[RMDB]
RNA sequence: GGGAACGACUCGAGUAGAGUCGAAAAAGUGUGUAUCGGCCUAAUGCCUUAUGCUAUGCAUUUUUUGCCGAAAGUGUUUCCUGCUAUAUCAAUUAGAGGAAAGUGGGCAGUUGGGUUAAGCUUAUUCCUCUCCACACGUAUUCGUACGUGUGGAGAGAAAAGAAACAACAACAACAAC
Reactivity to DMS in 0.01 (KOAc 150mM, MgCl2 10mM, bicine 150mM(pH8.5), 24C), signal-to-noise 2, nucleotides 027 to 126: a060g000u000g020u010g000u010a090u010c060g010g000c040c090u020a090a090u020g000c040c000u000u000a100u020g020c100u010a060u010g000c000a010u000u010u000u010u030u000g010c070c110g000a040a060a080g000u000g010u000u000u000c000c000u000g010c010u020a050u000a300u040c230a110a130u060u000a030g000a030g000g000a020a000a060g000u020g000g010g010c010a090g000u010u000g000g000g000u030u000a050a150g000c020u000u000a120u020u020c060
Reactivity to 2A3 in 0.01 (KOAc 150mM, MgCl2 10mM, bicine 150mM(pH8.5), 24C), signal-to-noise 2, nucleotides 027 to 126: a000g110u070g000u010g000u120a100u030c000g040g000c000c030u030a030a000u080g000c000c020u120u070a070u200g010c060u060a100u210g000c010a040u090u000u050u050u050u050g020c020c000g090a090a030a030g080u050g070u040u040u000c010c000u060g210c000u020a020u000a010u170c110a160a170u080u010a000g010a010g040g000a000a000a100g120u160g030g000g020c060a070g040u040u110g050g000g000u060u000a070a000g010c000u050u070a070u210u030c040
Background: An RNA of 177 nucleotides, treated with DMS and 2A3 and read out base by base. 2A3 adducts were read by reverse transcription with SuperScript II with manganese.